Overview
The data come from the RNA Mapping Database (RMDB), library OK3TST. The record gives the reactivity of an RNA of 207 nucleotides to 2A3 and DMS. The 2A3 profile rests on 899 reads. For DMS, 2,314 sequencing reads were counted. Reactivities are given for positions 27 through 156. For DMS the reverse transcriptase was MarathonRT.

RNA sequence: GGGAACGACUCGAGUAGAGUCGAAAAUUGCUAACGCCUCGCGUGUAUGGUUCUUAUAUCUUUGUGACUAUCUACAAUUUUAUACCGUACACUAGCAAUAACAGCUAUGGCUGCUUGCUUAUGAUGGGUAUUAUCGUGAUUGCUACAAUUGAUGUACCAAGACCUCUAACUUCGGUUAGAGGUCUUGAAAAGAAACAACAACAACAAC
Reactivity to 2A3 in 0.01 (KOAc 150mM, MgCl2 10mM, bicine 150mM(pH8.5), 24C), signal-to-noise 2, nucleotides 027 to 156: u120u090g010c010u050a060a030c020g010c020c020u070c080g040c010g000u020g010u010a080u070g020g000u160u000c060u250u050a060u010a020u110c050u030u070u000g020u020g080a100c040u030a040u100c030u050a040c030a030a030u010u020u040u050a090u030a030c010c000g060u060a010c010a000c000u000a000g010c000a000a010u010a160a000c010a030g020c010u170a060u270g050g000c000u010g000c000u040u020g020c010u070u040a020u070g070a030u160g010g000g000u010a020u060u030a020u120c070g010u030g030a020u060u040g000c000u040a040c050a020a060u190u050g060a030u080g090u060a090c130
Reactivity to DMS in 0.01 (KOAc 150mM, MgCl2 10mM, bicine 150mM(pH8.5), 24C), signal-to-noise 1, nucleotides 027 to 156: u030u030g000c030u000a060a080c040g030c010c040u020c130g030c090g040u040g010u000a140u010g030g010u000u010c120u000u060a080u020a070u000c030u000u010u010g020u000g000a060c040u000a120u010c030u020a050c040a020a040u000u010u000u000a050u000a040c020c000g070u000a170c020a010c020u000a010g030c010a030a070u000a080a060c020a050g050c020u000a130u000g100g020c010u010g060c040u000u000g010c020u020u020a020u040g000a110u010g020g010g000u010a030u000u010a030u010c020g010u000g020a050u020u000g010c000u000a030c090a080a080u000u010g020a060u000g020u000a140c250